[RMDB]
RNA sequence: GGGAACGACUCGAGUAGAGUCGAAAAGCAAUGACCUUCGGGUCAUUGCAAAAUAAAACAGGCAAGUUCCAGCCUGAAAAAGCAACAAAGAUCGAAAGAUCAAAAGGGGCAUCUUCGGAUGCCCCAAGAUUACUGAACAGUUCGCUGUUCAGUAAUCAAAAGAAACAACAACAACAAC
Reactivity to DMS in 0.01 (KOAc 150mM, MgCl2 10mM, bicine 150mM(pH8.5), 24C), signal-to-noise 2, nucleotides 027 to 126: g030c000a020a000u000g000a050c010c000u000u040c260g010g010g010u000c000a000u010u000g000c000a020a020a040a050u000a060a040a060a110c020a020g020g020c000a050a150g010u000u000c010c010a160g010c000c010u000g010a010a050a050a090a080g000c100a050a060c050a100a090a100g010a000u000c000g000a110a080a170g000a010u000c000a060a040a150a100g000g010g010g010c000a000u000c010u000u020c150g020g010a020u000g000c000c000c000c000a000a000